[RMDB]
RNA sequence: GGGAACGACUCGAGUAGAGUCGAAAAGAUAUGGAUGAACGAGCCGAGGAUCUAUAGGCACUCUCGGAAACGAGUUGCUAUAGGGAGGCUCGUGUCAUCCUAAGUCAAAGCUUGCUUCGGCAAGCAAUCAUCAAGCCGUGUUCGCACGGCUUGAUGAAAAAGAAACAACAACAACAAC
Reactivity to DMS in 0.01 (KOAc 150mM, MgCl2 10mM, bicine 150mM(pH8.5), 24C), signal-to-noise 1, nucleotides 027 to 126: g010a030u000a300u000g000g000a000u000g000a050a010c000g000a010g010c000c000g010a060g000g000a010u040c000u000a010u000a040g010g000c200a050c220u010c020u010c010g030g010a010a040a050c010g000a040g040u000u010g000c010u000a010u000a020g000g000g010a000g000g000c000u000c010g000u000g010u000c000a000u000c000c000u000a010a080g000u010c040a120a130a120g000c000u000u000g000c000u000u010c200g040g000c000a010a010g000c020a040a000